[RMDB]
Conditions: 150 mM KOAc, 10 mM MgCl2 and 150 mM bicine (pH 8.5), 24 C.
The record gives the reactivity of an RNA of 177 nucleotides to DMS and 2A3.
For DMS, 4,693 sequencing reads were counted.
For 2A3, 5,265 sequencing reads were counted.
DMS adducts were read by reverse transcription with MarathonRT.
It was measured as part of the RMDB library OK2TRN.
RNA sequence: GGGAACGACUCGAGUAGAGUCGAAAAGGUAGCAGAGAAGAGACUAGGCUUCAGACUAGAUAGUAUCACACUACGGGUACAUAGUAGAGACAUACAUAGAUGCGUAUGACACAUCAGAGCUGCCAUGCGCACUACUAAUGUUCGCAUUAGUAGUGCGAAAAGAAACAACAACAACAAC
Reactivity to DMS in 0.01 (KOAc 150mM, MgCl2 10mM, bicine 150mM(pH8.5), 24C), signal-to-noise 6, nucleotides 027 to 126: g010g020u010a010g010c030a070g000a180g020a080a090g010a120g020a110c090u000a050g010g000c070u000u000c120a120g000a070c030u000a070g000a120u010a080g000u000a090u010c050a100c150a110c130u000a030c110g000g020g010u010a020c090a060u000a080g020u010a050g000a130g010a120c080a040u000a060c110a100u010a070g020a050u000g010c050g010u000a050u010g000a090c060a030c060a060u010c080a080g000a130g010c060u000g020c040c020a090u010g000
Reactivity to 2A3 in 0.01 (KOAc 150mM, MgCl2 10mM, bicine 150mM(pH8.5), 24C), signal-to-noise 5, nucleotides 027 to 126: g060g000u050a000g000c030a010g040a000g020a210a000g030a020g020a070c070u070a050g050g080c030u060u060c060a030g050a060c010u050a020g040a110u120a080g080u030a030u060c020a020c020a030c210u190a040c100g050g000g010u030a040c030a070u070a030g030u030a020g020a000g020a100c010a040u060a030c000a020u180a050g100a090u150g020c010g000u050a040u100g040a030c010a010c000a070u050c020a010g030a020g130c010u030g000c020c020a030u080g040